[RMDB]
RNA sequence: GGGAACGACUCGAGUAGAGUCGAAAAUCGAGCACGUGCGCGGCUUCGGGGCCGACGGCGAUCUUGCUCAUGUAGAACACCGCCGACGGAUCGAACAUCGCACCGCGAUCGGCUACCGCCAGCACCGUGGAUUAUAGCGAUUCGUCGCUAUAAUCCAAAAAGAAACAACAACAACAAC
Reactivity to DMS in 0.01 (KOAc 150mM, MgCl2 10mM, bicine 150mM(pH8.5), 24C), signal-to-noise 3, nucleotides 027 to 126: u010c040g000a110g010c020a080c140g030u000g000c030g010c040g000g020c150u000u020c080g000g000g020g000c010c000g000a180c020g010g000c000g000a100u030c110u020u020g040c060u040c050a170u010g040u080a080g000a050a120c120a100c150c010g020c010c020g000a090c020g000g010a140u010c030g000a060a050c120a090u000c010g010c030a080c080c050g000c020g030a060u010c080g010g000c000u000a120c060c050g000c090c030a050g020c080a070c070c010g020
Reactivity to 2A3 in 0.01 (KOAc 150mM, MgCl2 10mM, bicine 150mM(pH8.5), 24C), signal-to-noise 5, nucleotides 027 to 126: u120c010g000a020g050c040a020c130g030u080g020c020g020c040g040g030c070u070u070c060g040g010g090g090c020c010g050a040c000g020g000c010g040a030u020c050u100u150g050c040u040c100a040u200g120u150a020g020a060a010c040a050c090c000g010c010c020g020a060c010g020g000a030u060c020g010a040a040c030a060u130c020g000c040a040c000c020g010c020g040a060u030c010g000g000c010u050a110c010c000g020c020c010a030g010c000a010c000c020g020